This 177-nucleotide RNA was probed chemically with 2A3.

RNA sequence: GGGAACGACUCGAGUAGAGUCGAAAACAUCUUGUGAUCCUUCCGUUUGCGAAACCUGAAAUUGAAUUAUUCUCGUUCACGCGGUGAGGUGUUACAUGGAAUUCAGAUACCGAACCCGCUUCAGGGCAUGCGAAGGCGAGUUCGCUCGCCUUCGCAUAAAAGAAACAACAACAACAAC
Reactivity to 2A3 in 0.01 (KOAc 150mM, MgCl2 10mM, bicine 150mM(pH8.5), 24C), signal-to-noise 1, nucleotides 027 to 126: c060a090u110c000u000u120g010u050g010a110u060c000c000u160u000c000c020g140u080u070u100g090c090g260a120a010a220c000c000u060g080a110a110a250u140u200g000a000a000u030u020a150u110u050c010u060c060g020u000u000c000a020c210g000c000g050g030u000g000a080g000g000u020g000u050u000a060c090a060u050g000g140a140a070u230u220c000a010g020a000u000a020c010c010g000a020a020c060c030c030g010c000u000u090c000a000g000g000g060c000
2A3 is a SHAPE reagent: it acylates the 2'-hydroxyl of flexible nucleotides of all four kinds.
Conditions: 150 mM KOAc, 10 mM MgCl2 and 150 mM bicine (pH 8.5), 24 C.